Structure probing data (DMS and 2A3) for a 177-nucleotide construct. For DMS the reverse transcriptase was MarathonRT. For DMS, 3,430 sequencing reads were counted. The reactions ran in a buffer of 150 mM KOAc, 10 mM MgCl2 and 150 mM bicine (pH 8.5), at 24 C. Values cover nucleotides 27 to 126. The 2A3 profile rests on 1,522 reads. For 2A3 the reverse transcriptase was SuperScript II with manganese.
[RMDB]
RNA sequence: GGGAACGACUCGAGUAGAGUCGAAAAUUCUUUCGGAGUUUCGGACACCCCCGUCUAGAAGCAGUCACCGCUGCAGAAAAUGUCAGAAAACAUAUGAACCAACCGAAGGUAAUCAGUUAUGAGACUACUAACAUUAGACUUUCGAGUCUAAUGUUAGAAAAGAAACAACAACAACAAC
Reactivity to DMS in 0.01 (KOAc 150mM, MgCl2 10mM, bicine 150mM(pH8.5), 24C), signal-to-noise 5, nucleotides 027 to 126: u000u000c010u000u000u000c030g010g010a230g010u000u000u010c030g010g000a180c300a080c030c000c000c000c070g010u000c070u010a090g000a200a150g000c000a030g020u000c100a150c300c250g000c010u010g000c020a040g000a070a070a080a050u000g020u000c060a060g000a050a030a060a020c030a070u000a100u000g000a060a080c060c060a090a100c020c010g010a020a010g000g000u000a080a060u000c060a070g010u010u010a060u010g020a120g000a060c100u010a130
Reactivity to 2A3 in 0.01 (KOAc 150mM, MgCl2 10mM, bicine 150mM(pH8.5), 24C), signal-to-noise 1, nucleotides 027 to 126: u010u010c000u000u000u040c030g040g000a070g030u050u060u080c010g010g020a010c000a020c000c000c000c000c020g020u000c010u050a080g000a120a000g010c000a020g000u060c040a000c150c050g000c000u030g000c000a000g130a000a090a040a030u160g030u010c040a020g070a070a100a000a000c020a010u190a030u220g030a030a030c010c000a030a030c030c010g010a010a010g000g020u030a030a100u070c010a040g020u000u080a150u170g100a070g020a060c020u050a000